[RMDB]
RNA sequence: GGGAACGACUCGAGUAGAGUCGAAAAAUGCUUUUGCUUGAUGACAAAACCAUAGCAAAUAAGUGCAGGGAAAAACCUAAACUAAACCAAUGCUCUUUGAAAAACAGAGGUUCAUUCGACCUGGGAUUUAAGCCUCCCGAAAACAGACUGAGCGUGAUGCAUUUAAAAUAUUCGUAUUUUAAAUGCAAAAAGAAACAACAACAACAAC
Reactivity to 2A3 in 0.01 (KOAc 150mM, MgCl2 10mM, bicine 150mM(pH8.5), 24C), signal-to-noise 3, nucleotides 027 to 156: a000u060g010c010u010u010u010u050g000c010u040u070g030a060u060g040a090c050a050a140a010a040c020c030a020u030a030g010c000a010a020a120u100a140a050g060u040g050c050a030g060g000g030a070a080a040a030a030c020c010u080a030a060a070c030u130a030a130a040c120c030a050a060u230g020c020u000c020u060u100u120g100a150a170a030a020a010c050a050g050a040g040g020u060u070c020a060u110u130c020g010a050c010c010u030g040g000g000a020u110u050u170a050a030g010c030c020u000c000c030c000g070a040a030a040a020c020a000g070a020c030u050g020a020g000c010g100u100g030a020
Reactivity to DMS in 0.01 (KOAc 150mM, MgCl2 10mM, bicine 150mM(pH8.5), 24C), signal-to-noise 2, nucleotides 027 to 156: a130u020g020c010u000u020u000u000g000c020u010u010g010a180u020g020a170c110a100a080a110a250c040c020a060u000a060g050c040a020a090a120u000a030a040g030u000g000c020a110g030g020g000a060a070a060a090a070c020c020u010a070a070a140c050u010a060a050a090c030c000a050a160u000g000c030u000c040u010u000u010g000a080a090a100a060a060c020a100g010a140g020g020u010u010c070a150u010u000c080g020a070c040c020u000g010g020g000a090u010u020u010a040a080g010c050c000u000c030c000c020g020a030a060a080a120c040a090g000a080c020u010g010a050g010c010g010u000g020a220